[RMDB]
RNA sequence: GGGAACGACUCGAGUAGAGUCGAAAACAGUGAUGGAAACAUCACUGAAAAACGUGGCAGCGCCGCACGAAAAAGUCGAUCGAAUACCGAUCGACAAGCGCUAAAGUCAUGCCGAAAGGCAUGACAAGAUAAUUAAUAAUUUCGAUUAUUAAUUAUCAAAAGAAACAACAACAACAAC
Reactivity to 2A3 in 0.01 (KOAc 150mM, MgCl2 10mM, bicine 150mM(pH8.5), 24C), signal-to-noise 4, nucleotides 027 to 126: c010a000g000u000g000a000u000g010g020a050a040a020c000a010u000c000a000c000u000g010a050a000a000a000a010c010g000u010g010g000c040a030g000c020g000c010c040g160c070a020c060g230a190a040a010a010a000g000u000c000g000a000u000c000g010a040a060u120a300c100c000g000a000u000c000g000a000c000a000a000g000c000g000c000u030a140a010a000g000u000c000a000u000g000c000c000g060a090a020a000g000g000c000a000u000g000a000c000a000a000
Reactivity to DMS in 0.01 (KOAc 150mM, MgCl2 10mM, bicine 150mM(pH8.5), 24C), signal-to-noise 3, nucleotides 027 to 126: c030a000g000u000g000a000u000g000g010a160a070a110c000a020u000c000a010c000u020g000a030a050a030a130a240c020g000u000g000g010c080a020g020c000g060c010c300g050c000a030c040g000a050a050a020a030a020g000u010c000g010a000u000c010g000a300a140u060a160c210c010g000a000u000c030g000a000c010a040a020g010c020g010c000u010a090a170a090g010u000c000a000u000g010c000c020g020a030a060a140g000g030c000a020u000g000a000c010a050a030

This 177-nucleotide RNA was probed chemically with 2A3 and DMS. For 2A3, 7,398 sequencing reads were counted. The reactions ran in a buffer of 150 mM KOAc, 10 mM MgCl2 and 150 mM bicine (pH 8.5), at 24 C. 2A3 adducts were read by reverse transcription with SuperScript II with manganese. For DMS the reverse transcriptase was MarathonRT.